The record gives the reactivity of an RNA of 177 nucleotides to 2A3 and DMS. The 2A3 profile rests on 57,496 reads.
RNA sequence: GGGAACGACUCGAGUAGAGUCGAAAAGACUCGGUGGCCACGCGUCUCUCGCGCUGUUGUCCGCACCCGCAGGGCGUCCCGGUGGGUCAACGCGGCGGCCUCAGUCGACGAACAGCGCCAUCGACGCAGUUGAUGAGAAAUUCGUUUCUCAUCAACUAAAAGAAACAACAACAACAAC
Reactivity to 2A3 in 0.01 (KOAc 150mM, MgCl2 10mM, bicine 150mM(pH8.5), 24C), signal-to-noise 9, nucleotides 027 to 126: g070a010c020u010c020g020g000u020g010g020c030c030a100c070g030c020g020u010c020u000c010u020c070g000c010g000c020u010g010u050u020g070u080c010c020g000c010a040c000c010c010g000c030a040g030g040g030c110g160u260c030c010c010g010g020u060g000g000g010u050c070a080a080c130g040c060g120g000c010g010g020c000c000u030c010a020g020u050c020g000a040c090g020a030a010c000a020g010c010g000c040c000a020u020c010g010a020c050g000c030
Reactivity to DMS in 0.01 (KOAc 150mM, MgCl2 10mM, bicine 150mM(pH8.5), 24C), signal-to-noise 9, nucleotides 027 to 126: g000a100c050u000c010g010g020u000g010g000c010c070a120c180g000c030g000u010c030u010c090u000c190g010c080g010c000u000g000u000u000g000u030c030c030g010c060a160c040c020c030g030c030a060g010g010g010c160g010u040c040c020c020g010g030u010g000g010g010u010c160a090a080c140g020c140g010g010c020g010g000c020c050u000c080a060g000u010c060g000a080c110g000a030a040c020a060g010c060g000c000c030a050u010c070g010a020c060g020c090